[RMDB]
RNA sequence: GGGAACGACUCGAGUAGAGUCGAAAAGCCGGGAUUGUUUACGGUGGUCGUUGAAGUCAUAACCAUAAGAUGAACGUUAGACUAUGGAAAAUCUAUGAAAGUUUAUCAUAGUUAUUGUGCGACCGAGCUAUAUUUAAUAAUUCGUUAUUAAAUAUAGAAAAGAAACAACAACAACAAC
Reactivity to 2A3 in 0.01 (KOAc 150mM, MgCl2 10mM, bicine 150mM(pH8.5), 24C), signal-to-noise 1, nucleotides 027 to 126: g010c000c000g000g000g070a200u090u090g020u080u010u050a060c000g000g020u040g010g000u000c000g020u020u100g060a030a000g100u030c020a040u040a120a010c010c020a030u040a160a060g050a080u180g020a030a040c010g030u040u040a060g010a030c050u060a070u060g100g020a020a050a000a000u050c030u030a110u100g110a160a100a160g020u090u120u090a080u050c000a000u000a000g000u050u060a100u130u200g040u020g000c000g000a000c000c000g000a000g060
Reactivity to DMS in 0.01 (KOAc 150mM, MgCl2 10mM, bicine 150mM(pH8.5), 24C), signal-to-noise 2, nucleotides 027 to 126: g020c000c010g030g000g000a110u010u010g010u000u010u010a050c040g000g020u010g020g000u000c020g000u030u060g000a120a120g020u010c040a040u010a050a020c060c110a150u020a060a110g000a090u010g000a030a030c030g000u010u020a050g000a040c020u030a070u010g000g010a060a030a080a060u010c020u010a030u020g020a070a110a140g000u010u030u010a030u010c000a030u000a040g000u000u010a040u010u010g020u020g010c030g010a040c020c010g000a100g000
The data come from the RNA Mapping Database (RMDB), library OK1LIB. This 177-nucleotide RNA was probed chemically with 2A3 and DMS. The reactions ran in a buffer of 150 mM KOAc, 10 mM MgCl2 and 150 mM bicine (pH 8.5), at 24 C. As a SHAPE reagent, 2A3 marks flexible, mostly unpaired nucleotides at the ribose 2'-OH. Reactivities are given for positions 27 through 126. For 2A3, 551 sequencing reads were counted. For DMS, 3,400 sequencing reads were counted.